[RMDB]
RNA sequence: GGGAACGACUCGAGUAGAGUCGAAAACGGCUUGUGUCGGGUGUCUGCUCACGCAGCGCGUAGAGCAUCGGCAGCGUGUGGACAGCUUGGCCAAGGUCGGCGCCCGAUAGCGUAGCGGAGUCACCGGCGCACGACAAGGCUUCGGCCUUGUCGUGCGAAAAGAAACAACAACAACAAC
Reactivity to DMS in 0.01 (KOAc 150mM, MgCl2 10mM, bicine 150mM(pH8.5), 24C), signal-to-noise 1, nucleotides 027 to 126: c080g010g020c030u010u010g000u000g020u000c040g010g020g000u000g010u010c040u000g020c060u000c020a050c030g040c010a130g000c060g020c030g020u000a120g010a100g010c170a070u010c040g010g020c000a050g020c030g010u010g030u020g000g000a060c020a040g000c050u010u000g020g020c040c000a060a120g020g010u000c120g020g010c070g000c010c010c000g010a030u000a050g010c050g020u010a030g010c020g000g000a100g010u000c090a130c020c010g020g000
Reactivity to 2A3 in 0.01 (KOAc 150mM, MgCl2 10mM, bicine 150mM(pH8.5), 24C), signal-to-noise 1, nucleotides 027 to 126: c010g070g020c010u040u000g040u010g020u110c000g000g010g030u010g000u000c010u040g070c030u000c040a020c030g000c020a130g030c150g000c030g160u060a110g030a070g180c050a100u190c000g010g040c000a030g020c000g030u100g030u100g100g070a030c030a060g050c040u100u200g090g000c010c020a040a030g100g020u110c030g030g000c000g030c010c000c010g070a110u030a060g070c070g000u000a030g000c040g010g050a040g070u010c010a010c110c070g040g070